RNA sequence: GGGAACGACUCGAGUAGAGUCGAAAAACUAACGGGCGACGACUGCGUCCCUGUUCUUUGUACACACCGCCCGUCGUUAUCUAAGAUGGUGCUAUGUUCGAAGAGGGUUUUCCUUCUGAGGACGUAGGAAUUAGGUAAGGUUCGCCUUACCUAAUUCAAAAGAAACAACAACAACAAC
Reactivity to DMS in 0.01 (KOAc 150mM, MgCl2 10mM, bicine 150mM(pH8.5), 24C), signal-to-noise 8, nucleotides 027 to 126: a060c090u000a070a030c070g000g000g020c070g020a070c060g020a160c160u000g020c100g010u000c010c020c020u000g010u000u000c070u000u000u000g010u000a100c120a130c050a070c060c020g000c020c010c010g010u000c060g000u000u000a050u010c090u010a110a130g000a050u010g010g010u000g010c000u000a000u000g010u000u000c000g010a300a020g000a020g000g000g000u000u000u000u010c000c000u000u000c010u000g010a300g000g000a010c000g020u000a000g000
Reactivity to 2A3 in 0.01 (KOAc 150mM, MgCl2 10mM, bicine 150mM(pH8.5), 24C), signal-to-noise 8, nucleotides 027 to 126: a010c050u060a040a010c030g010g000g050c070g030a020c030g060a050c150u220g070c160g060u010c010c000c000u010g080u070u020c030u050u070u120g170u110a030c050a000c000a010c040c020g040c010c090c000g020u010c010g040u050u100a100u070c060u100a090a100g030a130u100g030g060u050g020c000u020a010u020g000u000u010c010g000a010a000g000a010g040g020g010u040u050u150u220c000c000u020u010c000u010g010a030g000g010a000c000g000u000a000g030
Chemical mapping of a 177-nucleotide RNA with DMS and 2A3. Conditions: 150 mM KOAc, 10 mM MgCl2 and 150 mM bicine (pH 8.5), 24 C. Values cover nucleotides 27 to 126. For DMS the reverse transcriptase was MarathonRT.